[RMDB]
RNA sequence: GGGAACGACUCGAGUAGAGUCGAAAAUCAACUUGCCUCCCAGUUGCCAUGGUUACCUUUCUGGUUUCCAGACAGAAACUUUCUGAAGUUCACAAUGUAUCCAGACUUCUCUUCCCAGCAGCAACAAAGGGACUGCAGAUGUAUACUACCAUGCCUAAUUUACGUCAUGAUUCGUCAUGACGUAAAUAAAAGAAACAACAACAACAAC
Reactivity to DMS in 0.01 (KOAc 150mM, MgCl2 10mM, bicine 150mM(pH8.5), 24C), signal-to-noise 3, nucleotides 027 to 156: u000c030a060a110c050u010u000g000c070c070u000c020c010c010a260g010u000u000g010c010c040a140u000g030g000u000u000a030c040c020u000u000u000c160u010g020g010u000u010u010c030c030a070g030a110c080a110g010a110a030a030c050u000u000u000c040u000g010a020a040g010u000u010c040a090c080a080a150u000g010u000a090u010c040c030a100g000a090c040u000u010c020u000c040u000u010c010c000c010a190g000c060a060g010c030a100a060c030a030a120a140g020g020g000a020c010u000g020c020a100g000a110u000g020u000a080u010a070c060u000a050c040c020a090u010g010c010c030u020a070
Reactivity to 2A3 in 0.01 (KOAc 150mM, MgCl2 10mM, bicine 150mM(pH8.5), 24C), signal-to-noise 5, nucleotides 027 to 156: u090c010a000a080c040u070u120g000c010c020u000c000c000c000a020g010u030u050g020c040c020a040u030g010g000u050u080a110c010c000u090u130u070c050u070g010g020u020u060u020c050c020a030g020a040c020a020g090a100a090a050c040u080u130u070c060u200g070a070a030g010u060u060c040a030c040a150a120u090g030u060a050u050c030c020a030g030a090c010u070u010c040u030c030u080u010c000c000c010a040g010c020a010g010c000a020a050c010a080a170a040g010g010g020a020c060u040g020c020a020g000a090u030g040u060a080u040a090c050u030a040c020c030a050u070g020c040c010u070a070

An RNA of 207 nucleotides, treated with DMS and 2A3 and read out base by base.
For DMS, 7,306 sequencing reads were counted.
Reactivities are rounded to 0.1 and cut off at 0 and 3.
For 2A3, 4,115 sequencing reads were counted.
The data come from the RNA Mapping Database (RMDB), library OK3TST.
The RNA was probed in 150 mM KOAc, 10 mM MgCl2 and 150 mM bicine (pH 8.5) at 24 C.